This 177-nucleotide RNA was probed chemically with DMS and 2A3. The RNA was probed in 150 mM KOAc, 10 mM MgCl2 and 150 mM bicine (pH 8.5) at 24 C. It was measured as part of the RMDB library 15KREP. For 2A3 the reverse transcriptase was SuperScript II with manganese.
RNA sequence: GGGAACGACUCGAGUAGAGUCGAAAACGUCUCGCUGUAUAAUGUCACACGCGAUAAGUUGGAAAAACUUAUCUCUACUGCUCGUGAUGGCGUAAGGCGAGGCGAUAACUUCCAUAGUGUCUUAACAGAUAACUUAGUUGUUCGCAACUAAGUUAUCAAAAGAAACAACAACAACAAC
Reactivity to DMS in 0.01 (KOAc 150mM, MgCl2 10mM, bicine 150mM(pH8.5), 24C), signal-to-noise 6, nucleotides 027 to 126: c010g020u000c000u000c010g020c000u000g010u000a130u010a080a050u010g030u000c010a020c000a030c030g010c210g000a010u000a010a000g010u000u000g010g020a080a090a090a010a010c010u010u000a010u000c000u010c170u010a090c180u000g010c150u010c020g010u000g000a140u010g030g000c040g000u010a060a140g000g000c010g000a010g000g010c010g000a020u000a070a100c250u000u000c010c010a130u010a100g010u010g010u000c080u000u000a100a090c260a130
Reactivity to 2A3 in 0.01 (KOAc 150mM, MgCl2 10mM, bicine 150mM(pH8.5), 24C), signal-to-noise 7, nucleotides 027 to 126: c000g020u000c000u000c000g000c000u010g080u060a180u030a250a080u060g010u010c000a000c000a000c010g020c010g010a000u000a010a000g000u000u040g130g050a190a170a040a020a010c010u010u000a010u000c020u000c040u140a170c090u120g080c040u030c050g010u020g060a290u010g030g000c000g010u020a040a010g010g000c010g000a000g000g000c000g000a000u000a010a020c020u040u000c000c000a060u100a100g160u090g040u020c030u070u040a070a050c020a070